[RMDB]
Source information: Chemical mapping of a 177-nucleotide RNA with 2A3 and DMS. 2A3 adducts were read by reverse transcription with SuperScript II with manganese. The DMS profile rests on 9,881 reads.
RNA sequence: GGGAACGACUCGAGUAGAGUCGAAAACAUAUGACGGAGAGUGGAACACUCAGCGGAAACGCAUCCAAUGUCUGAAGUCUUUAAUGGGUAUAACAGUCAGUUGACCCAGAUCGCAACAGACAAUAAAGUGUCAUAAUAAGUUCGCUUAUUAUGACACAAAAGAAACAACAACAACAAC
Reactivity to 2A3 in 0.01 (KOAc 150mM, MgCl2 10mM, bicine 150mM(pH8.5), 24C), signal-to-noise 9, nucleotides 027 to 126: c020a030u190a100u260g100a040c070g040g010a030g000a000g090u060g020g190a160a020c040a000c060u030c020a020g020c010g020g000a050a030a010c020g000c010a010u020c020c030a090a110u060g000u000c000u000g030a050a020g020u020c000u020u070u060a220a160u040g000g010g030u050a140u040a300a030c030a030g300u280c030a040g000u130u010g020a000c000c000c010a010g010a020u040c030g000c020a010a070c000a080g010a010c010a010a030u150a040a110a020
Reactivity to DMS in 0.01 (KOAc 150mM, MgCl2 10mM, bicine 150mM(pH8.5), 24C), signal-to-noise 8, nucleotides 027 to 126: c060a100u000a070u010g020a110c120g010g010a100g010a030g020u000g010g020a120a130c090a040c030u000c040a130g020c030g000g000a070a090a120c040g020c020a300u010c030c040a110a100u010g010u000c000u000g010a070a280g000u000c030u000u000u000a100a100u000g000g000g000u000a050u010a010a010c020a190g010u010c250a110g010u000u000g000a020c010c000c000a010g000a040u000c180g010c020a060a190c020a010g000a010c010a050a060u010a050a070a100